Chemical mapping of a 177-nucleotide RNA with 2A3 and DMS. The RNA was probed in 150 mM KOAc, 10 mM MgCl2 and 150 mM bicine (pH 8.5) at 24 C. For 2A3 the reverse transcriptase was SuperScript II with manganese.

RNA sequence: GGGAACGACUCGAGUAGAGUCGAAAAGUGUUCAAUGUCUGAAGGGAAGGAGCCUUUAGUACGAGAGGAACGGGGGUUCGUGACCUCUAGUUUAUCGGUUGUCCGACAGGGCAGUUGCCGAGUAGCCAAUACAGGUACACUUCGGUGUACCUGUAUUAAAAGAAACAACAACAACAAC
Reactivity to 2A3 in 0.01 (KOAc 150mM, MgCl2 10mM, bicine 150mM(pH8.5), 24C), signal-to-noise 5, nucleotides 027 to 126: g100u070g050u040u080c080a090a070u160g050u010c010u010g060a050a060g070g050g020a130a110g090g050a090g060c000c000u020u040u020a070g010u120a050c070g020a030g010a040g130g080a030a000c030g010g000g000g000g020u060u050c050g040u120g140a100c000c010u000c020u000a060g030u010u080u060a110u030c010g020g030u120u040g010u030c010c010g050a080c110a100g000g030g000c010a020g020u180u120g010c000c000g010a020g030u060a010g070c010c030
Reactivity to DMS in 0.01 (KOAc 150mM, MgCl2 10mM, bicine 150mM(pH8.5), 24C), signal-to-noise 8, nucleotides 027 to 126: g020u020g020u000u010c030a080a090u020g010u010c000u000g000a080a060g000g000g000a160a110g000g010a120g020c020c030u010u000u010a040g010u020a060c030g000a140g010a140g010g000a180a030c060g010g000g000g010g000u010u000c100g010u010g010a150c000c000u000c020u010a040g010u010u010u020a090u000c000g000g000u000u000g010u000c000c010g000a190c300a110g000g010g000c010a030g000u020u030g000c010c020g010a060g010u000a080g020c090c110